The record gives the reactivity of an RNA of 177 nucleotides to DMS and 2A3. For 2A3 the reverse transcriptase was SuperScript II with manganese. The reactions ran in a buffer of 150 mM KOAc, 10 mM MgCl2 and 150 mM bicine (pH 8.5), at 24 C.

RNA sequence: GGGAACGACUCGAGUAGAGUCGAAAACUGGCGGGCGGCAUGACUCCCAUUGCCAGGAAAGCGUUCGGUGCCAGCGCUCGAACGAAGGCGCCGGAGCCCUGUGACGCGGAGGCCGCGGCGCGCACGGGAGGCUUUUAAUGUUCGCAUUAAAAGCCUCAAAAGAAACAACAACAACAAC
Reactivity to DMS in 0.01 (KOAc 150mM, MgCl2 10mM, bicine 150mM(pH8.5), 24C), signal-to-noise 2, nucleotides 027 to 126: c050u000g000g010c000g000g010g030c010g000g010c010a190u030g000a240c100u000c000c000c010a180u060u010g030c150c010a030g000g020a100a140a090g030c000g000u000u020c000g030g010u000g020c000c000a090g000c140g010c060u020c170g050a160a090c000g010a070a070g020g000c000g000c010c040g010g000a060g000c040c010c040u000g000u070g020a070c090g000c050g000g000a050g010g000c000c010g000c070g020g010c000g000c010g010c080a030c090g010g000
Reactivity to 2A3 in 0.01 (KOAc 150mM, MgCl2 10mM, bicine 150mM(pH8.5), 24C), signal-to-noise 4, nucleotides 027 to 126: c000u010g020g020c010g020g010g010c010g000g010c040a060u180g140a070c010u020c060c010c000a070u050u280g030c010c000a000g010g040a040a130a010g030c100g150u020u010c020g030g000u020g000c000c010a070g030c040g000c050u210c140g040a150a070c010g020a050a060g020g000c000g000c000c010g000g010a000g010c000c020c000u040g050u120g020a080c030g030c120g030g000a020g020g020c020c010g000c000g030g090c020g000c010g000c010a070c110g030g050